[RMDB]
RNA sequence: GGGAACGACUCGAGUAGAGUCGAAAAGUCGCCGCGUCGACAUCAACGCCCAGCGCGGGCGAGGGAUGCGUCCUACGGGGGUGCCCCAUUCGCCGGCAUGGUAGAGGACGGCAAGAUUGCCGCGACGAAUAUGAUUUACGUUCGCGUAAAUCAUAUUAAAAGAAACAACAACAACAAC
Reactivity to 2A3 in 0.01 (KOAc 150mM, MgCl2 10mM, bicine 150mM(pH8.5), 24C), signal-to-noise 9, nucleotides 027 to 126: g020u020c010g000c040c020g020c030g010u040c000g010a070c010a080u050c030a050a090c040g030c000c010c010a050g050c300g030c080g120g000g010c000g000a030g030g020g010a040u170g010c010g040u030c010c010u050a150c160g220g000g020g010g050u040g010c000c000c000c000a120u120u090c020g000c000c000g040g020c030a040u050g040g010u090a060g010a040g090g050a030c020g000g010c020a020a050g120a110u170u300g010c020c020g000c000g010a010c010g010
Reactivity to DMS in 0.01 (KOAc 150mM, MgCl2 10mM, bicine 150mM(pH8.5), 24C), signal-to-noise 9, nucleotides 027 to 126: g000u000c010g030c010c190g020c030g010u010c010g010a170c110a060u000c040a070a130c060g000c060c000c010a120g010c140g030c070g010g010g000c010g010a030g000g010g010a080u010g010c010g010u000c000c000u000a100c190g020g010g010g010g010u000g010c020c010c010c010a150u010u000c030g010c020c020g000g010c020a050u000g010g010u010a130g000a140g000g010a090c040g000g000c090a080a140g000a070u000u000g040c020c140g010c010g000a040c050g000